[RMDB]
Background
Conditions: 150 mM KOAc, 10 mM MgCl2 and 150 mM bicine (pH 8.5), 24 C. Structure probing data (DMS) for a 177-nucleotide construct. DMS adducts were read by reverse transcription with MarathonRT. It was measured as part of the RMDB library M2PK90. Values cover nucleotides 27 to 126.
RNA sequence: GGGAACGACUCGAGUAGAGUCGAAAAUGUCACACAGUAGCGAGGGAUGCAAUUUAUUGCAUCUACACCAAGCUCAAGGCUUGGAUUUCGACUAGUGUCGAGUCGUUCCCACUCGCUACGCCCACAACUCCCAAUAUCACUUCGGUGAUAUUGGGAGAAAAGAAACAACAACAACAAC
Reactivity to DMS in 0.01 (KOAc 150mM, MgCl2 10mM, bicine 150mM(pH8.5), 24C), signal-to-noise 2, nucleotides 027 to 126: u000g010u040c210a060c160a180c150a140g010u000a000g010c000g000a010g020g010g000a010u000g010c010a000a020u010u030u000a050u030u000g010c000a000u000c000u000a100c170a150c010c000a020a000g010c000u000c240a130a080g030g000c000u000u000g000g000a300u000u000u000c010g000a010c000u000a020g010u000g000u000c000g010a000g000u000c000g000u000u010c000c000c000a000c000u000c000g000c010u000a020c010g010c030c000c010a130c090a030a120